Structure probing data (DMS and 2A3) for a 177-nucleotide construct. The DMS profile rests on 2,389 reads. 2A3 adducts were read by reverse transcription with SuperScript II with manganese. The reactions ran in a buffer of 150 mM KOAc, 10 mM MgCl2 and 150 mM bicine (pH 8.5), at 24 C.

[RMDB]
RNA sequence: GGGAACGACUCGAGUAGAGUCGAAAAGAGGGAAGAGCAGGACAAGGAUCGUCGAAACGAGGGGGGAUUUUGUCGACUCGAGGAGAAUGCAGUACACGCACUGAGACGUCCAGAAUUUGAACAUGUACUUCUUAAAGCCUUUCGAGGCUUUAAGAAGAAAAGAAACAACAACAACAAC
Reactivity to DMS in 0.01 (KOAc 150mM, MgCl2 10mM, bicine 150mM(pH8.5), 24C), signal-to-noise 3, nucleotides 027 to 126: g010a100g010g000g000a060a050g000a060g030c100a060g000g000a100c090a110a070g020g020a060u000c050g030u000c060g010a060a060a110c150g030a060g010g010g000g020g010g000a110u000u000u020u010g000u000c010g000a030c020u000c020g000a130g010g000a140g000a060a120u010g030c030a050g030u000a070c150a070c120g000c060a070c070u000g000a150g010a080c070g020u000c010c030a100g000a060a100u000u010u020g010a070a070c140a080u010g010u000a090
Reactivity to 2A3 in 0.01 (KOAc 150mM, MgCl2 10mM, bicine 150mM(pH8.5), 24C), signal-to-noise 1, nucleotides 027 to 126: g100a010g070g040g000a000a030g020a020g090c070a010g060g050a000c010a100a040g070g000a100u160c030g050u040c070g110a120a040a020c050g020a150g020g020g010g040g000g010a000u010u120u000u070g050u040c010g020a070c000u000c020g020a030g050g000a030g040a010a060u110g000c030a000g040u070a000c020a020c110g040c020a010c020u010g050a020g000a100c000g020u040c000c000a020g080a150a060u190u170u220g040a070a000c070a060u110g000u120a040